Structure probing data (2A3) for a 207-nucleotide construct. It was measured as part of the RMDB library M2RFPK. The RNA was probed in 150 mM KOAc, 10 mM MgCl2 and 150 mM bicine (pH 8.5) at 24 C. For 2A3 the reverse transcriptase was SuperScript II with manganese. For 2A3, 549 sequencing reads were counted.
[RMDB]
RNA sequence: GGGAACGACUCGAGUAGAGUCGAAAAGAAAGAAAGAAAUUAGCUCGCCAGUUAGCGAGGUCUGUCCCCACACGACAGAUAAUCGGGUGCAACUCCGGCCCCUUUUCCGAGGGUCAUCGGAACCAAAAAAACUCAGGCAACUUCGGUUGCCUGAGAACACUAACGGUGACUUCGGUCACCGUUAGUGAAAAGAAACAACAACAACAAC
Reactivity to 2A3 in 0.01 (KOAc 150mM, MgCl2 10mM, bicine 150mM(pH8.5), 24C), signal-to-noise 1, nucleotides 027 to 156: g060a010a050a000g080a060a130a000g030a100a180a030u160u100a140g010c040u040c040g010c020c070a180g120u230u250a050g010c000g000a000g010g000u010c000u020g000u020c000c000c080c000a000c000a000c020g000a000c010a000g060a060u050a020a090u090c080g110g000g000u120g100c100a040a110c060u030c020c010g060g000c010c000c040c000u120u120u050u000c030c000g010a030g000g000g090u040c080a010u050c000g000g000a010a010c040c040a040a000a020a040a020a020a020c000u000c000a000g010g000c000a000a000c000u060u090c140g020g000u020u010g010c000c000u000g000a000g000a010a000